Chemical mapping of a 207-nucleotide RNA with 2A3 and DMS. In probing experiments dimethyl sulfate is read out at A N1 and C N3, which are open when not base-paired. It was measured as part of the RMDB library OK3TST. Reactivities are given for positions 27 through 156. The 2A3 profile rests on 2,561 reads. The RNA was probed in 150 mM KOAc, 10 mM MgCl2 and 150 mM bicine (pH 8.5) at 24 C.
RNA sequence: GGGAACGACUCGAGUAGAGUCGAAAAAGUACAUGAGCUACAUCCUGAACGGGACACGCUCGGGUGAGAAGUACCUCCCGGCGAUCAUCGCCGCCCUCGCGCUCGACCCGAAGAAGGCGGAGCGGGCGAUCGCGGCAUGACGCACGGAAGGGAGGGAUCUUACAGAAUUUUUCGAAAUUCUGUAAGAAAAAGAAACAACAACAACAAC
Reactivity to 2A3 in 0.01 (KOAc 150mM, MgCl2 10mM, bicine 150mM(pH8.5), 24C), signal-to-noise 4, nucleotides 027 to 156: a010g150u120a090c040a070u140g010a010g010c000u040a060c020a070u050c010c010u060g050a080a060c130g020g010g040a050c040a030c110g000c000u010c030g000g010g000u100g010a160g020a090a060g050u060a060c000c000u010c000c000c000g000g000c000g070a250u010c000a020u030c070g000c020c000g010c010c010c000u050c010g040c000g000c000u030c010g230a300c030c000c020g080a140a110g080a050a020g090g010c050g020g010a040g020c020g000g060g010c080g030a030u100c090g000c000g000g020c000a000u000g000a000c010g010c030a030c040g080g050a080a050g010g000g020a010g000g000g000a000
Reactivity to DMS in 0.01 (KOAc 150mM, MgCl2 10mM, bicine 150mM(pH8.5), 24C), signal-to-noise 2, nucleotides 027 to 156: a090g040u000a120c040a110u010g030a040g030c030u000a120c100a130u000c000c010u000g040a100a070c140g010g040g030a130c080a130c140g040c020u010c010g000g000g020u000g000a160g030a120a070g010u000a070c010c010u000c000c000c010g000g040c010g020a130u000c010a000u000c130g020c000c000g020c000c030c000u000c000g020c010g030c010u010c010g010a200c000c020c010g010a170a200g010a140a030g010g000c010g020g000a230g020c000g030g020g010c000g010a030u000c040g010c020g040g000c010a020u000g000a080c010g020c010a080c070g000g020a060a060g000g010g000a030g020g000g010a070